[RMDB]
RNA sequence: GGGAACGACUCGAGUAGAGUCGAAAAGAUAUGGACCUAGUCUCGUCCCAGGCGUUGAAAUCGGAAACGAUGGAGCCUGAGGACGGUGCCUAGGUCCUAAGUCAAAACAAGGACUUCGGUCCUUGAAGAGACAAACUAAGUUCGCUUAGUUUGUCUCAAAAGAAACAACAACAACAAC
Reactivity to 2A3 in 0.01 (KOAc 150mM, MgCl2 10mM, bicine 150mM(pH8.5), 24C), signal-to-noise 4, nucleotides 027 to 126: g040a010u070a050u130g000g000a000c000c000u010a000g000u020c010u010c030g010u000c000c000c000a010g010g000c020g280u300u080g020a030a040a010u010c000g000g040a100a010a070c020g010a010u000g000g020a010g000c010c000u020g000a080g000g000a000c000g000g010u020g000c000c000u000a000g080g000u000c000c000u000a000a000g000u000c020a000a000a040a140c010a010a000g000g000a010c000u060u190c300g100g000u010c000c000u000u000g010a010a010
Reactivity to DMS in 0.01 (KOAc 150mM, MgCl2 10mM, bicine 150mM(pH8.5), 24C), signal-to-noise 6, nucleotides 027 to 126: g010a030u010a300u000g000g000a010c000c000u000a010g010u000c000u000c010g000u000c000c000c000a020g000g020c000g020u000u020g000a090a110a030u000c000g010g000a140a110a200c000g010a010u000g000g010a140g010c000c000u000g000a080g000g000a020c000g000g000u000g000c060c000u010a010g000g010u000c000c000u000a000a060g010u000c030a080a090a150a240c010a000a010g000g000a020c000u000u010c190g030g010u000c000c000u000u000g000a070a100
Structure probing data (2A3 and DMS) for a 177-nucleotide construct. DMS adducts were read by reverse transcription with MarathonRT. For 2A3, 16,525 sequencing reads were counted. The DMS profile rests on 9,510 reads. The reactions ran in a buffer of 150 mM KOAc, 10 mM MgCl2 and 150 mM bicine (pH 8.5), at 24 C. It was measured as part of the RMDB library TTRDEL.